[RMDB]
RNA sequence: GGGAACGACUCGAGUAGAGUCGAAAAACUGACGGUACGCCGUCAAAACGGUAGAAAAGAUGGUUUGAAAACCACGCCUUCUACCAAUAUAGUAAAUAAAUAGGCGGAGCGGUCAUACGUGACCGCAAAAACAUAUUCAGCUUCGGCUGAAUAUGAAGGUGGAUAGCAUGUUCGCAUGCUAUCCACCAAAAGAAACAACAACAACAAC
Reactivity to 2A3 in 0.01 (KOAc 150mM, MgCl2 10mM, bicine 150mM(pH8.5), 24C), signal-to-noise 1, nucleotides 027 to 156: a000c010u000g020a000c000g000g000u050a000c170g020c000c000g000u000c000a000a060a010a000c020g020g020u000a000g030a010a010a000a010g110a260u020g000g050u020u050u060g170a170a250a000a000c000c000a000c020g000c000c000u000u060c000u000a000c000c000a030a000u030a010u010a000g090u060a000a000a140u080a030a130a100u200a010g000g000c000g030g010a000g000c000g000g010u010c000a000u030a070c270g100u100g000a000c060c000g000c000a000a000a000a000a000c000a000u010a000u000u000c000a000g000c000u040u110c220g180g000c000u000g000a000a000u000a000u000g020a000a090